[RMDB]
RNA sequence: GGGAACGACUCGAGUAGAGUCGAAAAGAUAUGGAUCCCGUAGCUAGCGAUUUCGGAAACGAACUCGCUUGGACCUACAGGGAUCCUAAGUCAAAGUAACUAGGAUGGUUCGCCAUCCUAGUUACAACUUUCGAUUUUACUUCGGUAAAAUCGAAAGAAAAGAAACAACAACAACAAC
Reactivity to DMS in 0.01 (KOAc 150mM, MgCl2 10mM, bicine 150mM(pH8.5), 24C), signal-to-noise 2, nucleotides 027 to 126: g000a020u000a280u010g010g010a010u000c010c000c000g030u000a010g020c030u000a010g000c010g010a020u000u000u000c010g010g000a070a100a110c000g020a010a010c100u000c000g020c000u000u000g010g010a110c300c010u000a000c010a110g020g000g000a010u000c000c000u000a000a070g000u000c030a100a130a100g010u010a010a000c000u010a000g010g010a010u010g000g020u020u050c250g020c000c010a010u000c000c010u000a000g000u000u000a000c000a120a050
Reactivity to 2A3 in 0.01 (KOAc 150mM, MgCl2 10mM, bicine 150mM(pH8.5), 24C), signal-to-noise 1, nucleotides 027 to 126: g040a010u090a050u100g000g000a010u030c000c020c000g000u000a000g010c080u030a000g000c000g020a020u000u000u000c010g020g020a050a040a030c010g000a000a000c000u010c010g010c000u010u030g060g070a100c010c000u050a180c260a300g000g030g000a000u000c000c000u010a060a020g030u010c030a010a030a200g000u010a010a010c000u000a010g000g020a000u020g000g040u050u260c300g020c000c000a000u010c010c000u000a000g000u000u000a000c000a000a000
Conditions: 150 mM KOAc, 10 mM MgCl2 and 150 mM bicine (pH 8.5), 24 C. Structure probing data (DMS and 2A3) for a 177-nucleotide construct. Values cover nucleotides 27 to 126. For DMS the reverse transcriptase was MarathonRT. The DMS profile rests on 1,993 reads.